Structure probing data (2A3 and DMS) for a 177-nucleotide construct. In probing experiments dimethyl sulfate is read out at A N1 and C N3, which are open when not base-paired. The RNA was probed in 150 mM KOAc, 10 mM MgCl2 and 150 mM bicine (pH 8.5) at 24 C. DMS adducts were read by reverse transcription with MarathonRT. Reactivities are given for positions 27 through 126. The 2A3 profile rests on 8,407 reads.

RNA sequence: GGGAACGACUCGAGUAGAGUCGAAAACGUGUUAUGUUCGCAUAACACGAAAACCCCAUGCCGAACUCAGAAGUGAAACGCCCUAGCGCCGAUGGUAGUGUGAAACACAGCGGUUCGCCGCUGUGAAGUAUUUGAUUUACUUCGGUAAAUCAAAUACAAAAGAAACAACAACAACAAC
Reactivity to 2A3 in 0.01 (KOAc 150mM, MgCl2 10mM, bicine 150mM(pH8.5), 24C), signal-to-noise 4, nucleotides 027 to 126: c000g000u010g000u000u010a000u010g020u020u050c140g000c110a000u000a010a000c000a000c000g010a010a000a000a000c000c010c000c000a020u070g030c000c010g070a080a060c020u050c070a110g020a150a030g150u060g070a120a090a020c030g030c010c000c020u030a020g030c020g020c050c020g060a060u070g040g020u020a060g030u030g030u020g130a020a050a000c000a000c000a000g010c000g030g010u020u050c170g010c060c000g000c000u010g000u000g000a010a000
Reactivity to DMS in 0.01 (KOAc 150mM, MgCl2 10mM, bicine 150mM(pH8.5), 24C), signal-to-noise 7, nucleotides 027 to 126: c010g020u010g010u000u000a000u000g000u000u010c200g020c000a010u000a000a000c000a000c000g010a040a040a140a140c070c000c000c070a100u010g010c040c020g000a080a070c080u010c050a060g000a110a090g020u000g000a070a080a090c080g000c020c020c020u000a080g010c040g020c020c010g000a090u000g010g010u000a050g030u000g020u000g010a110a090a190c010a010c010a010g010c000g010g000u000u000c180g020c000c000g010c000u000g010u000g000a030a090